[RMDB]
RNA sequence: GGGAACGACUCGAGUAGAGUCGAAAACUGAUCUCCGAACGGGACUUAUGGCCGGUGCCAUCCCCGAAUUCUAUGAACUCUCCGUCUCCGGUGGUGCAGGCCAGAGUUAUACUUCCGGCACCCACAGUGGAAGCUCAAACCCUAGAACCGGUGUCAACUACCGGCAAAAUUUCGAUUUUGCCGGUAGAAAAGAAACAACAACAACAAC
Reactivity to 2A3 in 0.01 (KOAc 150mM, MgCl2 10mM, bicine 150mM(pH8.5), 24C), signal-to-noise 1, nucleotides 027 to 156: c050u070g010a050u030c060u000c100c040g060a100a070c050g030g000g020a030c020u050u130a250u300g080g000c030c010g040g020u050g000c030c020a030u030c060c010c000c000g080a000a080u110u000c140u190a180u160g120a120a080c020u030c020u000c110c090g140u040c070u030c090c010g000g000u000g000g010u010g000c010a000g000g000c000c000a030g000a000g010u080u070a080u080a250c020u000u000c010c000g050g000c010a110c000c050c000a090c030a030g090u180g110g000a030a050g000c000u010c170a110a170a070c040c040c020u090a070g030a100a020c040c010g000g000u080g110u140c040a090a100